[RMDB]
RNA sequence: GGGAACGACUCGAGUAGAGUCGAAAACGCGGUAUAGAUGUAUAAGUGUGUGGUCCCUCCCGUGGGUACUAUCUCGUUUCAUACGCCUGUGAUAGGUUCAAAGUGGGCGGUCUGAGGAUUACGCGAAGUGUAUUAAUUAAUUCGUUAAUUAAUACACAAAAGAAACAACAACAACAAC
Reactivity to DMS in 0.01 (KOAc 150mM, MgCl2 10mM, bicine 150mM(pH8.5), 24C), signal-to-noise 8, nucleotides 027 to 126: c040g000c030g000g010u020a050u020a060g010a100u010g010u020a060u020a070a110g010u020g020u010g010u000g000g020u000c030c020c010u000c050c040c050g030u020g000g010g010u010a040c080u010a030u020c030u010c030g000u010u000u000c080a070u010a110c110g010c070c020u010g010u010g010a100u030a050g010g010u010u020c090a040a070a110g010u010g000g000g010c040g000g010u010c050u000g010a080g010g010a080u020u010a070c060g000c040g000a080a100
Reactivity to 2A3 in 0.01 (KOAc 150mM, MgCl2 10mM, bicine 150mM(pH8.5), 24C), signal-to-noise 9, nucleotides 027 to 126: c040g010c040g020g040u100a080u100a130g130a090u100g160u110a090u050a190a100g050u050g010u020g030u030g090g030u030c010c000c000u030c040c030c010g030u090g030g000g020u060a040c010u020a030u030c020u000c030g040u000u100u020c070a070u100a120c040g020c020c020u050g010u020g070a090u110a100g090g000u070u150c050a080a070a050g060u090g030g020g020c030g020g020u000c040u020g040a060g060g020a060u080u100a070c050g000c030g050a140a050
Chemical mapping of a 177-nucleotide RNA with DMS and 2A3. 2A3 is a SHAPE reagent: it acylates the 2'-hydroxyl of flexible nucleotides of all four kinds. Conditions: 150 mM KOAc, 10 mM MgCl2 and 150 mM bicine (pH 8.5), 24 C. For DMS the reverse transcriptase was MarathonRT. Values cover nucleotides 27 to 126. Source: RMDB library OK1LIB, as collected in RNAgym.